This 177-nucleotide RNA was probed chemically with DMS and 2A3.
DMS adducts were read by reverse transcription with MarathonRT.
Source: RMDB library VIROID, as collected in RNAgym.
The DMS profile rests on 3,062 reads.
The RNA was probed in 150 mM KOAc, 10 mM MgCl2 and 150 mM bicine (pH 8.5) at 24 C.
RNA sequence: GGGAACGACUCGAGUAGAGUCGAAAAUGCCCCUCUGGGGAAUACACUACGUGACUUACCUGUAUGGUGGCAAUGGAUCGAAGAGGGAUCCCCGGGGAAACCUACUCGAGCGAGUCUGAGAUCGAGCCAACCUAAUAUCCUUCGGGAUAUUAGGUUGAAAAGAAACAACAACAACAAC
Reactivity to DMS in 0.01 (KOAc 150mM, MgCl2 10mM, bicine 150mM(pH8.5), 24C), signal-to-noise 3, nucleotides 027 to 126: u000g000c090c040c020c030u010c100u010g050g020g020g020a040a060u000a180c050a050c030u010a080c050g010u000g000a270c080u000u000a040c010c010u000g000u020a130u000g000g010u000g010g000c040a050a050u000g010g000a130u000c010g010a070a040g000a150g010g020g010a140u000c000c000c020c010g010g010g010g000a120a080a090c040c010u000a030c000u000c000g000a030g020c020g010a080g000u000c020u000g010a090g010a080u010c040g000a090g010c180
Reactivity to 2A3 in 0.01 (KOAc 150mM, MgCl2 10mM, bicine 150mM(pH8.5), 24C), signal-to-noise 2, nucleotides 027 to 126: u060g030c000c010c000c000u050c090u070g000g000g020g020a030a040u260a130c040a020c040u080a030c040g060u040g090a060c020u070u120a040c000c020u170g170u300a150u300g110g010u040g020g020c050a060a170u160g040g020a040u050c030g040a110a040g030a140g130g030g020a030u010c010c000c000c030g000g000g000g000a020a000a010c000c010u000a000c000u020c020g010a000g020c000g010a100g030u000c010u040g080a090g010a210u090c060g010a040g050c020